[RMDB]
RNA sequence: GGGAACGACUCGAGUAGAGUCGAAAAGCAUACAACUUCGGUUGUAUGCAACGACAGAGUUGACUGUCAUAAACAACGUAACAUGUGAGUUACAAUAACAGAUUGCAGCAGCUUUCGAGCUGCUGAACUCCAAGAUACUAUUCGUAGUAUCUUGGAGAAAAGAAACAACAACAACAAC
Reactivity to DMS in 0.01 (KOAc 150mM, MgCl2 10mM, bicine 150mM(pH8.5), 24C), signal-to-noise 7, nucleotides 027 to 126: g000c000a010u000a000c000a010a010c000u000u010c210g030g010u000u000g010u000a000u000g000c010a030a050c170g000a010c010a010g000a130g010u000u000g000a160c000u000g000u000c100a120u000a070a060a090c070a060a040c110g000u010a030a010c020a170u020g010u010g000a150g010u000u000a010c010a130a110u010a060a090c170a090g010a120u000u010g010c000a010g010c000a000g000c000u000u010u020c170g010a020g010c000u000g000c000u000g000a010a100
Reactivity to 2A3 in 0.01 (KOAc 150mM, MgCl2 10mM, bicine 150mM(pH8.5), 24C), signal-to-noise 8, nucleotides 027 to 126: g000c000a000u000a000c000a000a000c010u010u090c190g120g000u020u010g000u000a000u000g000c000a010a000c040g010a000c000a000g030a010g040u040u050g120a230c000u000g010u010c020a020u140a040a090a010c040a020a020c070g010u020a010a010c020a040u180g160u110g300a130g060u060u020a010c030a020a040u130a060a030c080a040g130a200u150u300g040c010a000g000c000a000g000c000u070u060u160c220g100a000g010c010u000g000c000u000g000a010a000